[RMDB]
RNA sequence: GGGAACGACUCGAGUAGAGUCGAAAAUUUUCAAUACCGGGGUUGUAUACUACUCCUAACACUCUAUGAGAAAACGGGAAAUUUAUACCCGUUUGUAUAUAAUAGGUACAUGAUGGAUUACAUGCAAUCAAAAUAGCACUUUCGAGUGCUAUUUUGAAAAAGAAACAACAACAACAAC
Reactivity to DMS in 0.01 (KOAc 150mM, MgCl2 10mM, bicine 150mM(pH8.5), 24C), signal-to-noise 2, nucleotides 027 to 126: u010u010u020u020c060a080a110u010a190c070c010g060g040g010g050u000u010g010u000a020u000a050c250u000a030c100u030c010c040u000a130a120c170a100c040u040c020u000a010u000g000a280g000a160a020a000a010c000g010g000g000a120a120a240u000u000u010a110u010a180c000c000c000g000u000u000u010g000u000a040u010a070u010a090a060u010a050g010g040u000a060c140a060u000g010a090u000g010g000a040u010u000a040c050a010u010g010c110a030a040
An RNA of 177 nucleotides, treated with DMS and read out base by base. For DMS, 779 sequencing reads were counted.